[RMDB]
RNA sequence: GGGAACGACUCGAGUAGAGUCGAAAAGACCGUCAGUUAGACGGAAGAAGUGCAUAAAUCCACAUCGGAAGACGAGAUAAUGCACAAAUGUGGAUAAGCGUACGGAUCUACGUGCGCUAAACGUGAGACGAGCUAGUAUGUUCGCAUACUAGCUCGUAAAAGAAACAACAACAACAAC
Reactivity to DMS in 0.01 (KOAc 150mM, MgCl2 10mM, bicine 150mM(pH8.5), 24C), signal-to-noise 3, nucleotides 027 to 126: g020a110c000c000g020u010c010a180g000u030u050a080g010a000c000g010g000a110a050g020a160a130g000u000g020c000a040u010a050a060a070u020c000c020a060c280a100u000c040g010g050a150a050g000a040c040g000a190g010a020u010a050a020u010g000c000a020c010a080a020a020u000g030u000g010g010a100u000a060a030g000c040g000u000a000c000g010g000a200u020c210u040a180c000g000u000g040c020g030c010u010a010a030a050c150g040u000g000a130g010
Reactivity to 2A3 in 0.01 (KOAc 150mM, MgCl2 10mM, bicine 150mM(pH8.5), 24C), signal-to-noise 2, nucleotides 027 to 126: g060a000c040c000g000u000c000a070g000u050u300a140g000a000c000g080g010a000a010g110a030a010g000u090g000c040a050u040a140a060a000u070c030c000a000c000a070u010c090g040g090a110a040g020a050c050g000a010g000a130u050a080a000u110g010c010a000c010a090a000a070u170g020u070g020g040a000u030a060a130g000c000g010u000a000c000g040g000a010u070c050u110a120c000g000u000g000c030g000c000u000a010a070a000c000g060u080g060a070g030
The record gives the reactivity of an RNA of 177 nucleotides to DMS and 2A3. For 2A3 the reverse transcriptase was SuperScript II with manganese. The reactions ran in a buffer of 150 mM KOAc, 10 mM MgCl2 and 150 mM bicine (pH 8.5), at 24 C. Values are in units of 0.01, from 0 to 300, in steps of 10. In probing experiments dimethyl sulfate is read out at A N1 and C N3, which are open when not base-paired.